RNA sequence: GGGAACGACUCGAGUAGAGUCGAAAAGACGCCUGUGUGGCGAAGCGAGCAUGAGAUGGAGCCGCAAGAGAAGAUGAGAUAGAAGCGGCGUGAUAGAUUGCUCGCCAAAAGAUCCAUCUCACAGAGACGCUGGUAAUAUAUUCGUAUAUUACCAGCGAAAAGAAACAACAACAACAAC
Reactivity to 2A3 in 0.01 (KOAc 150mM, MgCl2 10mM, bicine 150mM(pH8.5), 24C), signal-to-noise 6, nucleotides 027 to 126: g080a010c020g030c000c010u150g060u090g150u250g110g000c010g020a010a010g010c000g000a000g000c030a030u070g000a040g010a060u060g050g070a040g000c000c010g000c040a070a030g110a020g030a160a080g110a130u300g090a080g070a110u200a100g110a160a040g010c000g000g000c010g000u070g030a040u050a060g090a050u010u120g000c010u000c000g000c000c000a000a070a000a010g030a010u010c020c000a020u000c010u010c010a130c040a020g060a030g020a080
Reactivity to DMS in 0.01 (KOAc 150mM, MgCl2 10mM, bicine 150mM(pH8.5), 24C), signal-to-noise 5, nucleotides 027 to 126: g020a160c030g020c010c000u000g040u030g010u040g020g030c000g010a140a110g000c020g000a020g000c030a030u010g020a270g000a050u010g010g020a280g010c000c000g020c000a100a180g010a120g010a090a080g000a210u040g000a110g000a160u030a110g000a190a190g010c000g000g000c000g000u020g010a100u020a040g000a110u010u000g000c000u000c000g000c010c070a010a080a080a140g000a090u020c010c040a070u000c000u000c020a050c140a120g000a120g030a140

This 177-nucleotide RNA was probed chemically with 2A3 and DMS. The 2A3 profile rests on 5,755 reads. In probing experiments dimethyl sulfate is read out at A N1 and C N3, which are open when not base-paired.